[RMDB]
RNA sequence: GGGAACGACUCGAGUAGAGUCGAAAAGUUGAAGACCACAUUUAUUGGGGCGUGGAAAAUGAAACGUACGAUAAAGGAGGAGGGCAUUUAUCGGGAUCGUAAGUUUGAUUCGAAUGAAGAAGAUGGCCCCUCGCAAACUUUUCGAAGUUUGCGAGGGAAAAGAAACAACAACAACAAC
Reactivity to DMS in 0.01 (KOAc 150mM, MgCl2 10mM, bicine 150mM(pH8.5), 24C), signal-to-noise 1, nucleotides 027 to 126: g020u040u080g020a170a170g090a060c000c060a190c110a110u100u040u000a060u060u030g000g020g000g000c040g000u000g000g010a100a000a000a150u080g000a100a060a120c100g010u000a090c050g000a030u000a000a060a030g030g000a170g000g110a180g050g000g000c030a000u000u000u000a070u000c070g000g000g050a050u000c040g030u000a150a130g000u000u000u030g000a010u020u020c170g000a120a080u060g000a070a140g000a010a120g040a070u090g000g000c040
Reactivity to 2A3 in 0.01 (KOAc 150mM, MgCl2 10mM, bicine 150mM(pH8.5), 24C), signal-to-noise 2, nucleotides 027 to 126: g020u060u120g020a050a100g010a010c030c000a030c050a050u240u230u300a110u050u200g020g050g010g000c060g050u140g070g000a000a000a140a220u070g080a160a140a000c060g000u060a000c020g010a010u070a040a160a000g140g000a000g050g020a170g000g100g000c050a000u000u110u060a080u140c000g000g000g050a000u000c000g030u050a020a120g100u170u180u160g110a090u000u000c000g050a030a060u210g000a020a160g010a020a000g000a010u010g170g010c010